[RMDB]
RNA sequence: GGGAACGACUCGAGUAGAGUCGAAAAGAUAUGGAUGUAUUUAAAUGUAUUUCGUCAAUGAUGUCGGAAACGAUUGAGACGAAUACGGUAAAUACAUCCUAAGUCAAAACGGCGGUUCGCCGCCGAACGUUGGAGUAAUCUUCGGAUUACUCCAACGAAAAGAAACAACAACAACAAC
Reactivity to 2A3 in 0.01 (KOAc 150mM, MgCl2 10mM, bicine 150mM(pH8.5), 24C), signal-to-noise 2, nucleotides 027 to 126: g050a040u100a030u130g000g010a010u010g010u000a040u000u030u020a130a250a170u150g050u040a040u070u300u180c020g000u000c020a190a300u180g050a020u080g060u030c020g060g090a120a060a070c040g000a040u020u090g040a010g000a040c000g030a000a000u000a000c000g000g000u020a000a000a000u000a000c000a000u000c000c000u000a020a020g040u020c000a000a080a130a110c020g000g020c010g000g050u030u080c270g040c080c000g000c000c000g000a020a010
Reactivity to DMS in 0.01 (KOAc 150mM, MgCl2 10mM, bicine 150mM(pH8.5), 24C), signal-to-noise 2, nucleotides 027 to 126: g000a030u000a300u010g000g000a030u010g010u000a020u000u000u000a010a030a180u020g030u010a010u000u000u000c000g060u000c000a140a190u020g010a120u020g010u010c000g020g000a140a050a190c000g040a010u000u010g000a200g010a000c000g000a030a010u010a000c000g000g000u010a000a010a020u000a010c010a000u010c000c010u010a020a080g030u000c010a060a010a080a150c060g010g010c000g030g020u000u000c120g000c000c000g010c000c010g000a020a050